RNA sequence: GGGAACGACUCGAGUAGAGUCGAAAACGUGCCAUUCGUGGCACGAAAAAGAUAUGGAUUCCCGAGAUGAGAGCGAUAAGUUGAGGAUCGGAAACGAUCCUUCAACUUUUGACGCUCUGAGGGAAUCCUAAGUCAAAAAAGGACAUUCGUGUCCUAAUCGAUAAGAUAGGUUCGCCUAUCUUAUCGAAAAAGAAACAACAACAACAAC
Reactivity to DMS in 0.01 (KOAc 150mM, MgCl2 10mM, bicine 150mM(pH8.5), 24C), signal-to-noise 4, nucleotides 027 to 156: c020g030u000g030c000c010a090u000u000c300g050u000g030g000c000a000c000g010a010a030a050a140a120g000a100u000a300u010g000g000a070u010u000c000c000c010g000a300g010a300u010g000a030g000a020g020c000g000a120u010a010a020g010u000u010g010a070g000g010a020u000c000g010g020a130a100a290c010g000a020u000c000c010u010u000c000a000a010c000u040u000u000u000g020a070c010g000c010u000c010u010g000a130g020g010g010a020a010u000c000c000u000a000a040g000u010c020a000a050a040a080a110a060g000g000a050c000a120u000u000c210g020u000g020u000c000c000u000a020a080
Reactivity to 2A3 in 0.01 (KOAc 150mM, MgCl2 10mM, bicine 150mM(pH8.5), 24C), signal-to-noise 4, nucleotides 027 to 156: c010g000u010g000c010c000a050u070u090c290g110u070g000g020c010a000c010g010a030a000a000a000a020g050a040u080a040u100g000g010a000u000u000c020c040c070g020a030g030a070u300g060a070g000a010g030c020g030a050u040a150a000g010u000u000g000a000g010g000a000u000c010g020g000a030a090a040c010g000a000u000c010c000u000u020c000a000a000c010u010u010u000u030g000a000c000g000c000u010c000u000g010a040g000g000g010a000a000u000c000c000u000a010a000g010u010c020a000a040a070a060a020a030g020g010a000c020a000u100u160c280g080u100g000u020c000c000u000a020a110